[RMDB]
RNA sequence: GGGAACGACUCGAGUAGAGUCGAAAACUGACUUGGUAGUAGUGCAAACACUAGUUGUAUGGCCCGCGAAGGAUGCCCAGAAGGUACCCGUAGGUAACAAGUGACACUAUGGAUCUGAUCUGGGGCUCUACCGUGAUUUCUUCGGAAAUCACGGUAGAAAAGAAACAACAACAACAAC
Reactivity to DMS in 0.01 (KOAc 150mM, MgCl2 10mM, bicine 150mM(pH8.5), 24C), signal-to-noise 1, nucleotides 027 to 126: c000u000g000a180c080u000u100g010g000u060a010g080u000a040g000u030g000c250a060a030a150c130a070c030u000a080g000u000u000g000u000a010u020g030g110c000c040c080g060c050g070a090a130g000g060a070u020g000c030c030c030a000g030a140a300g000g000u000a080c110c000c000g000u000a000g000g000u100a000a010c000a180a020g030u010g000a010c300a000c000u000a000u000g000g020a040u010c000u000g000a120u050c080u040g000g040g040g060c120u000
Reactivity to 2A3 in 0.01 (KOAc 150mM, MgCl2 10mM, bicine 150mM(pH8.5), 24C), signal-to-noise 2, nucleotides 027 to 126: c020u030g220a050c020u060u170g050g000u150a050g010u000a000g020u020g100c060a020a160a000c000a060c040u020a100g020u080u080g150u120a120u040g040g050c000c000c060g080c030g020a010a070g100g080a050u140g130c000c000c000a000g000a000a000g000g020u050a130c000c020c000g000u000a000g000g030u040a000a000c040a190a110g050u040g050a000c020a000c010u000a010u000g000g000a010u000c030u030g000a060u070c000u010g040g010g000g000c010u000

Annotation
Conditions: 150 mM KOAc, 10 mM MgCl2 and 150 mM bicine (pH 8.5), 24 C. The record gives the reactivity of an RNA of 177 nucleotides to DMS and 2A3. For DMS the reverse transcriptase was MarathonRT.